[RMDB]
RNA sequence: GGGAACGACUCGAGUAGAGUCGAAAAACGUACCUAGGAUCCUAGACUAGACAUGCGAGUACUGAUCACUAGCUAGACACUGGAUCACGACAGUACGAUCCAUGAUGAUCACAUGCGUACUGAUCUGGCACACCGUUUGAUUCGUCAAACGGUGUGCAAAAGAAACAACAACAACAAC
Reactivity to 2A3 in 0.01 (KOAc 150mM, MgCl2 10mM, bicine 150mM(pH8.5), 24C), signal-to-noise 2, nucleotides 027 to 126: a010c040g000u010a000c010c030u030a030g010g000a010u000c000c010u040a010g000a050c020u030a040g040a110c080a070u100g090c010g000a010g060u160a270c090u170g150a160u100c010a020c030u030a030g000c000u010a020g040a050c030a010c160u030g030g000a020u030c100a000c250g020a010c000a000g050u050a000c030g010a070u000c060c000a010u110g000a020u040g000a030u070c070a040c000a050u090g100c000g040u040a050c030u040g050a160u000c010u030g100
Reactivity to DMS in 0.01 (KOAc 150mM, MgCl2 10mM, bicine 150mM(pH8.5), 24C), signal-to-noise 2, nucleotides 027 to 126: a110c030g020u010a070c020c020u010a250g000g000a010u000c000c020u000a170g000a170c020u000a050g030a120c050a130u000g080c090g010a070g040u000a090c230u000g000a040u010c020a100c040u000a110g000c020u000a030g020a200c120a100c140u000g000g010a040u000c020a040c100g010a030c300a140g000u000a010c020g050a270u010c040c000a020u040g000a130u000g020a060u000c040a030c040a060u000g020c090g000u000a010c100u010g000a030u000c090u030g000